RNA sequence: GGGAACGACUCGAGUAGAGUCGAAAAUUAAAGAACUAUGAUCUGCACUGAACAAGUCACGGUGGUCGGAAACGACCCCGAAAGGCCAGGUCAUAGUUCCGACCUGAAGACUUGACGGGUCAAAAAAGCUAUACCAAUACUUCGGUAUUGGUAUAGCAAAAGAAACAACAACAACAAC
Reactivity to DMS in 0.01 (KOAc 150mM, MgCl2 10mM, bicine 150mM(pH8.5), 24C), signal-to-noise 2, nucleotides 027 to 126: u000u020a090a090a050g020a000a000c020u000a010u010g000a020u000c020u010g030c070a030c010u000g020a090a120c030a000a010g000u000c010a300c040g020g010u000g000g060u020c000g000g000a120a080a170c020g010a020c010c240c000c000g020a040a040a080g000g000c250c000a010g000g000u000c000a030u000a020g010u000u000c000c050g020a000c030c000u000g010a140a120g000a010c000u010u000g000a300c060g000g000g030u010c010a000a000a080a050a070a100
Annotation: Chemical mapping of a 177-nucleotide RNA with DMS. The data come from the RNA Mapping Database (RMDB), library M2PK90. The reactions ran in a buffer of 150 mM KOAc, 10 mM MgCl2 and 150 mM bicine (pH 8.5), at 24 C. For DMS the reverse transcriptase was MarathonRT. For DMS, 1,468 sequencing reads were counted.